[RMDB]
RNA sequence: GGGAACGACUCGAGUAGAGUCGAAAAACUAGGAAACUAGCUUCCAUUUAGUGGAUGUGGCACUUAAUAACAUUAAAUGGAAGAAUAAAUAGUGCCACAUGAAAAGGCGAAAAGUAUAGUAGGAUACACCGAAGUGUACCUGCUAUGCUUUUUAAUACCAGUAGGUACCCUUCGGGGUGCCUACUGGAAAAGAAACAACAACAACAAC
Reactivity to 2A3 in 0.01 (KOAc 150mM, MgCl2 10mM, bicine 150mM(pH8.5), 24C), signal-to-noise 2, nucleotides 027 to 156: a000c000u000a000g010g020a070a040a060c010u010a000g000c010u000u000c000c000a000u020u030u010a000g020u010g110g060a060u020g020u000g000g000c000a000c010u060u020a070a070u120a290a060c020a030u030u070a010a060a030u030g010g000a020a000g020a020a010u110a030a010a000u160a000g000u000g000c000c000a000c000a000u020g020a000a100a030a050g100g010c070g050a010a000a000a000g000u000a010u000a010g010u000a000g020g020a090u030a020c040a000c030c140g130a190a110g000u000g010u000a000c000c000u000g000c000u000a000u000g000c000u000u000u000u000u000a000a000u040a010
Reactivity to DMS in 0.01 (KOAc 150mM, MgCl2 10mM, bicine 150mM(pH8.5), 24C), signal-to-noise 1, nucleotides 027 to 156: a160c000u010a040g010g020a270a190a300c010u000a030g010c020u000u000c010c010a040u000u000u010a050g060u000g010g030a100u010g020u000g040g060c030a030c010u010u000a080a180u000a020a060c020a010u000u000a020a050a090u000g000g020a050a020g010a100a070u000a040a080a140u000a040g000u000g010c000c010a050c020a030u010g000a090a030a060a200g000g040c170g010a030a010a020a060g010u000a010u000a000g050u070a030g030g010a230u000a000c000a010c050c120g040a100a150g000u000g030u010a000c000c000u000g010c000u010a010u000g010c000u000u000u010u000u000a070a100u000a160